[RMDB]
Chemical mapping of a 177-nucleotide RNA with 2A3.
It was measured as part of the RMDB library OK1LIB.
RNA sequence: GGGAACGACUCGAGUAGAGUCGAAAAACAGCGACAUUUAUGAUUUUAGGUGCCGUAUGUACAAGAGCUUGUCGUUUUUGUGCGGUUAAGACAGGUUUACCUAAUGAACUUGAUUUAAAUGAGCCUGGCGAAACUCCUACUUCGGUAGGAGUUUCGCAAAAGAAACAACAACAACAAC
Reactivity to 2A3 in 0.01 (KOAc 150mM, MgCl2 10mM, bicine 150mM(pH8.5), 24C), signal-to-noise 2, nucleotides 027 to 126: a000c090a070g000c130g060a240c000a000u000u000u000a140u190g160a050u000u000u000u080a000g050g000u000g010c000c000g080u170a080u230g050u000a040c000a000a010g000a010g060c060u110u130g200u300c090g070u050u000u000u000u130g000u000g000c020g020g000u040u210a040a000g120a080c160a160g040g000u000u030u300a250c010c010u000a050a050u240g040a030a140c200u120u260g010a000u200u070u050a000a000a000u040g030a110g000c000c040u000g000
Values cover nucleotides 27 to 126. 2A3 adducts were read by reverse transcription with SuperScript II with manganese. High 2A3 reactivity points to a flexible backbone, as in loops and unpaired stretches.